[RMDB]
An RNA of 207 nucleotides, treated with DMS and 2A3 and read out base by base.
It was measured as part of the RMDB library OK3TST.
The reactions ran in a buffer of 150 mM KOAc, 10 mM MgCl2 and 150 mM bicine (pH 8.5), at 24 C.
In probing experiments dimethyl sulfate is read out at A N1 and C N3, which are open when not base-paired.
RNA sequence: GGGAACGACUCGAGUAGAGUCGAAAAAAGCAGCAGCGGCUGAAUGAACUGCUAGUUGUGAUUCCGCUCAAGCUCCACCAGAUAGAGUAUGUGGUAUUUGGAGAAAUACCUAGCGAUCUUUCUGGUACUUUGGUCUUCUCUAACCAUGCCUUGAGAAGUACCAGUAAAUAUUCGUAUUUACUGGUACAAAAGAAACAACAACAACAAC
Reactivity to DMS in 0.01 (KOAc 150mM, MgCl2 10mM, bicine 150mM(pH8.5), 24C), signal-to-noise 2, nucleotides 027 to 156: a090a030g010c080a010g000c030a030g030c030g010g030c080u020g000a090a160u010g020a060a050c000u000g030c000u000a060g000u000u000g010u000g010a180u010u000c020c040g000c020u000c020a030a040g010c040u010c040c070a060c000c030a040g000a100u000a050g020a060g010u000a100u010g000u000g000g050u000a030u000u000u000g020g030a250g010a040a020a030u000a020c000c000u000a150g030c070g000a040u000c010u000u000u010c030u010g030g010u000a040c100u000u000u010g000g030u000c040u000u010c030u000c080u000a060a070c010c020a030u000g010c110c020u000u000g000a050g000a140a170
Reactivity to 2A3 in 0.01 (KOAc 150mM, MgCl2 10mM, bicine 150mM(pH8.5), 24C), signal-to-noise 6, nucleotides 027 to 156: a000a000g020c030a000g000c020a010g010c010g130g010c050u110g100a120a150u180g020a110a080c010u020g010c020u040a080g010u010u020g020u010g030a100u040u000c010c000g000c000u010c010a010a010g020c020u060c070c030a010c010c000a000g010a020u040a000g040a010g080u200a110u300g090u110g030g010u000a010u010u040u080g100g030a090g090a030a010a000u010a010c000c030u040a040g080c040g130a050u010c000u020u050u010c000u010g000g020u030a040c050u070u030u050g020g000u000c040u100u020c020u070c010u020a030a020c000c010a040u070g020c000c000u020u030g010a020g020a110a010